[RMDB]
RNA sequence: GGGAACGACUCGAGUAGAGUCGAAAAAGAGGAAAGGAGGACACGGACGACAAACCGUAAGUUCUACUGCCCUUUAUUGUUGGGUGCACCCUGGGACCCAGUAAUACCCGGGGGGAGGCGGGGUAAACUUAUCACAAACGUUCGCGUUUGUGAUAAGAAAAGAAACAACAACAACAAC
Reactivity to DMS in 0.01 (KOAc 150mM, MgCl2 10mM, bicine 150mM(pH8.5), 24C), signal-to-noise 1, nucleotides 027 to 126: a130g000a040g020g000a090a300a020g000g020a050g010g000a000c000a070c010g020g000a020c200g010a210c300a030a120a090c030c010g060u000a060a090g050u000u000c000u000a110c030u000g000c300c000c000u020u020u020a090u040u010g000u000u000g010g000g000u020g000c130a120c030c070c000u000g030g000g000a110c020c010c010a050g030u000a020a020u010a090c050c000c010g000g000g000g020g020g000a080g000g000c130g000g000g040g000u020a060a130a120
Source: RMDB library 15KREP, as collected in RNAgym. The record gives the reactivity of an RNA of 177 nucleotides to DMS. For DMS the reverse transcriptase was MarathonRT. For DMS, 607 sequencing reads were counted. Values cover nucleotides 27 to 126.